[RMDB]
RNA sequence: GGGAACGACUCGAGUAGAGUCGAAAACAGGGAAGCACCCAUGCAAAGCACCCCCGCUUUGACUGCUUGGCAGACCUAGGGUGCCCGGGAAGCACAAGGGAUACCCUUGGCCCUGCGGGGUGUGGCCCAGGUGCCUGCCAUGAGCCUGACCCCAUCGCUUCUACUAGACCUUCGGGUCUAGUAGAAGAAAAGAAACAACAACAACAAC
Reactivity to 2A3 in 0.01 (KOAc 150mM, MgCl2 10mM, bicine 150mM(pH8.5), 24C), signal-to-noise 1, nucleotides 027 to 156: c070a020g010g010g060a120a000g020c010a040c020c020c050a040u100g000c040a150a070a010g020c000a100c010c050c000c040c000g000c020u100u150u070g100a130c020u000g020c000u070u220g060g050c020a030g030a140c010c010u040a070g000g000g010u020g050c000c000c000g080g010g010a130a030g040c110a070c010a300a010g050g000g010a100u170a200c000c000c000u010u020g000g010c010c000c040u110g030c040g000g000g010g000u080g050u050g070g000c000c050c060a020g090g000u010g020c040c000u010g050c000c000a070u140g040a000g040c010c020u020g040a050c040c000c000c010a080u130c110g000